Record summary
An RNA of 177 nucleotides, treated with 2A3 and DMS and read out base by base. For DMS the reverse transcriptase was MarathonRT. Source: RMDB library OK1LIB, as collected in RNAgym. Values cover nucleotides 27 to 126. The 2A3 profile rests on 2,890 reads. The DMS profile rests on 3,894 reads.
[RMDB]
RNA sequence: GGGAACGACUCGAGUAGAGUCGAAAAGAACCAUCAUACGAGGCGGCGUAGAUGGACCGCCGAAAGAAAGAAAGAAAGAAACGUACGGCGUGGCCUCGCUCGUACGAAAGGCCGAGAAAGAAAGAAAGGAUAUGAGUUACUUCGGUAACUCAUAUCCAAAAGAAACAACAACAACAAC
Reactivity to 2A3 in 0.01 (KOAc 150mM, MgCl2 10mM, bicine 150mM(pH8.5), 24C), signal-to-noise 2, nucleotides 027 to 126: g050a010a090c020c020a050u050c000a050u030a050c050g000a050g050g000c000g030g030c020g000u100a120g060a200u130g080g070a000c000c030g010c000c010g010a000a070a000g140a010a040a030g100a050a050a000g050a000a070a000g040a050a060a000c010g000u050a010c000g040g050c040g000u080g060g090c010c010u140c020g050c010u150c070g000u010a000c000g000a020a020a000g000g000c050c050g050a060g010a010a060a010g150a000a040a010g130a000a100a030
Reactivity to DMS in 0.01 (KOAc 150mM, MgCl2 10mM, bicine 150mM(pH8.5), 24C), signal-to-noise 2, nucleotides 027 to 126: g010a170a190c040c000a070u020c050a130u000a030c100g000a040g000g000c010g000g000c030g010u010a050g010a070u000g020g010a090c030c000g000c000c010g020a050a100a090g000a050a050a080g000a030a110a060g010a000a060a100g010a060a050a170c050g000u010a040c000g010g000c010g020u010g030g000c100c060u010c010g000c020u000c020g000u010a020c000g000a010a040a030g000g000c010c000g000a050g030a080a050a090g010a070a110a090g010a040a090a080